Structure probing data (2A3 and DMS) for a 177-nucleotide construct. For DMS, 1,888 sequencing reads were counted. Values cover nucleotides 27 to 126. The 2A3 profile rests on 882 reads. Source: RMDB library OK2TST, as collected in RNAgym.
[RMDB]
RNA sequence: GGGAACGACUCGAGUAGAGUCGAAAAAUUGUGGGACAGCUGCUUACCUGGCAAAGCCUGCAGUCGGAAGGACUGUACCUGAGUUCCAAUCCUGCCAAUGCUUUUUACUACGUGAUGACCGGCCUCCCUAAUUGUAGCCGUUCGCGGCUACAAUUAGAAAAGAAACAACAACAACAAC
Reactivity to 2A3 in 0.01 (KOAc 150mM, MgCl2 10mM, bicine 150mM(pH8.5), 24C), signal-to-noise 1, nucleotides 027 to 126: a000u100u090g030u090g000g000g070a030c010a050g010c010u030g030c030u100u080a150c000c080u050g000g060c050a010a080a080g090c000c000u030g020c030a020g020u020c020g130g060a110a050g160g020a020c000u030g100u090a020c020c040u060g050a000g000u090u050c000c000a020a060u000c010c000u060g040c040c040a140a090u080g000c080u000u030u050u190u100a160c070u080a020c090g070u090g030a050u040g000a060c000c040g040g020c010c000u000c010c010
Reactivity to DMS in 0.01 (KOAc 150mM, MgCl2 10mM, bicine 150mM(pH8.5), 24C), signal-to-noise 2, nucleotides 027 to 126: a040u010u000g020u010g000g000g000a060c070a140g020c050u000g020c040u010u010a120c130c060u000g000g010c040a040a090a110g010c030c030u010g020c030a020g010u010c050g010g030a170a090g010g000a040c030u010g010u000a050c070c050u000g000a080g000u010u010c000c020a080a190u000c020c020u000g030c050c070a070a090u000g000c010u010u000u010u010u030a090c060u020a080c110g000u000g010a060u000g000a150c040c030g030g000c030c010u000c010c030